[RMDB]
RNA sequence: GGGAACGACUCGAGUAGAGUCGAAAAGGCCUCAGAUCACUGCUUCAGCUUCUACCUUUAGAAGCUAAAAGGAAAAGAGCAAAUUAAAACCAAAGUAAGGCUAAGUGUGGUGGCUCACUCCUGUAAUCCCAACACUUUAGGAGACCAAGAUGGGAGAAUUUAAAUUAGCGUUCGCGCUAAUUUAAAUAAAAGAAACAACAACAACAAC
Reactivity to DMS in 0.01 (KOAc 150mM, MgCl2 10mM, bicine 150mM(pH8.5), 24C), signal-to-noise 1, nucleotides 027 to 156: g000g050c030c020u000c070a110g000a100u010c060a050c050u000g000c090u000u000c080a050g000c030u010u000c000u000a090c300c090u000u000u080a010g010a030a020g040c000u010a010a020a090a100g000g000a060a070a140a130g000a100g030c050a050a060a270u020u000a040a120a060a140c030c030a060a090a120g010u000a050a110g010g000c020u000a030a090g020u010g020u010g020g060u000g010g000c030u000c020a050c000u000c000c030u000g000u020a070a080u000c010c000c030a050a070c040a080c050u000u000u000a070g010g040a080g010a090c010c050a020a080g050a040u010g000g000g010a050g030a140
Reactivity to 2A3 in 0.01 (KOAc 150mM, MgCl2 10mM, bicine 150mM(pH8.5), 24C), signal-to-noise 1, nucleotides 027 to 156: g050g040c000c020u030c030a020g060a180u040c030a020c070u000g020c000u070u070c060a000g030c000u010u020c010u030a200c080c030u090u200u150a000g020a020a000g000c000u000a000a050a000a050g070g030a060a080a170a020g050a000g010c000a010a000a170u130u110a160a250a000a000c040c010a090a020a000g050u050a070a020g130g000c030u020a090a100g040u030g020u010g060g080u030g040g030c020u020c030a020c010u000c000c000u030g030u040a010a040u010c000c020c020a040a000c000a030c000u030u010u060a050g070g040a060g020a050c050c000a040a030g030a050u100g000g030g040a040g050a040